An RNA of 207 nucleotides, treated with DMS and 2A3 and read out base by base. DMS adducts were read by reverse transcription with MarathonRT. For 2A3, 4,639 sequencing reads were counted. 2A3 adducts were read by reverse transcription with SuperScript II with manganese. Values cover nucleotides 27 to 156.
RNA sequence: GGGAACGACUCGAGUAGAGUCGAAAACUGACACUUCGGUGUCAGAAAAAACCUUUGUGCCUAGACAUGCUCGGGGUGCAUGCCCCAUUGGGGAACUACAUGCACGCCGUGAGCAACAGCUAGGCACUCUGGUAAAAAACCUCGGUUCGCCGAGGAAGUUACAUGUUUUCUUCGGAAAACAUGUAACAAAAGAAACAACAACAACAAC
Reactivity to DMS in 0.01 (KOAc 150mM, MgCl2 10mM, bicine 150mM(pH8.5), 24C), signal-to-noise 1, nucleotides 027 to 156: c010u010g000a000c000a010c000u000u000c300g060g000u000g010u000c000a030g000a000a030a050a140a140a010c000c000u000u000u000g000u000g000c030c000u000a040g020a100c040a300u000g000c000u000c000g040g020g070g030u010g000c000a000u000g010c010c020c010c000a290u000u010g030g010g040g000a040a070c020u030a170c000a040u000g000c000a030c020g000c000c020g060u000g030a010g000c010a030a060c110a150g000c010u000a030g010g030c000a000c000u000c010u010g050g060u000a000a050a050a080a070a110c020c000u000c010g000g020u000u000c300g050c050c000g000a000g030g030a000a040
Reactivity to 2A3 in 0.01 (KOAc 150mM, MgCl2 10mM, bicine 150mM(pH8.5), 24C), signal-to-noise 4, nucleotides 027 to 156: c000u000g010a000c000a000c000u080u130c300g110g000u000g000u000c000a000g000a030a100a000a000a000a000c000c000u000u010u030g010u010g000c010c000u020a030g030a120c030a100u050g000c000u000c010g000g010g020g000u010g010c000a010u020g000c000c010c020c050a230u160u300g020g000g010g010a020a030c040u180a030c280a000u000g020c020a010c070g240c010c000g060u040g030a010g000c000a030a030c020a040g020c010u000a000g000g010c000a000c000u000c000u010g000g000u120a050a030a010a000a010a090c000c000u000c000g000g020u080u050c150g050c090c000g000a000g000g000a020a020